Conditions: 150 mM KOAc, 10 mM MgCl2 and 150 mM bicine (pH 8.5), 24 C.
The record gives the reactivity of an RNA of 177 nucleotides to DMS.
RNA sequence: GGGAACGACUCGAGUAGAGUCGAAAAAAAAGAUAUGGACCUACGGUAGCUUGAGGACACGAAGAACUCGCUCGGAAACGAGCGAGGGAGUGUUGUAGAGCUAUAAUCGUAGGUCCUAAGUCAAAAACAAUCUACAAUGCUUCGGCAUUGUAGAUUGAAAAGAAACAACAACAACAAC
Reactivity to DMS in 0.01 (KOAc 150mM, MgCl2 10mM, bicine 150mM(pH8.5), 24C), signal-to-noise 2, nucleotides 027 to 126: a040a040a050a040g000a050u000a300u020g000g000a000c020c000u000a000c000g020g040u000a020g000c000u010u000g000a290g030g000a000c000a010c010g000a110a160g020a170a160c030u000c000g020c000u010c010g010g000a090a110a150c020g010a020g010c000g000a020g030g000g000a050g000u000g020u000u010g010u000a250g020a020g030c010u000a090u010a300a100u010c020g010u000a000g000g010u000c000c000u000a010a100g040u000c030a090a070a140a100a090
Values cover nucleotides 27 to 126. It was measured as part of the RMDB library TTRDES. In probing experiments dimethyl sulfate is read out at A N1 and C N3, which are open when not base-paired. The DMS profile rests on 1,438 reads.